[RMDB]
RNA sequence: GGGAACGACUCGAGUAGAGUCGAAAAACUCCGAGAUGAAGCGGUUAAUCUUCUCAUAGUAGGAUAGGUCGACGCGGAGCACUUCAGUCAAGCGGACCUGGUGCUCACAUGGACGGAACUCGACGAAGGCUGAUUCGCGCCAGAACGCGGGUUCAACGAACUCCCUUUUGUUCGCAAAAGGGAGUUCAAAAGAAACAACAACAACAAC
Reactivity to 2A3 in 0.01 (KOAc 150mM, MgCl2 10mM, bicine 150mM(pH8.5), 24C), signal-to-noise 1, nucleotides 027 to 156: a000c010u000c000c000g000a020g010a060u290g040a000a000g030c040g030g010u070u220a120a030u080c010u040u010c000u000c060a080u010a090g050u080a030g030g070a060u030a040g000g060u040c010g060a010c040g020c090g110g000a000g000c000a000c000u140u120c060a090g030u110c070a100a110g150c110g130g000a080c030c000u010g050g010u000g000c000u000c000a060c010a010u120g010g030a010c010g070g010a020a010c010u020c030g070a080c010g040a230a040g060g000c080u060g050a170u070u180c000g040c030g000c060c010a000g060a060a000c000g010c000g020g000g060u000u000c000a000a000c070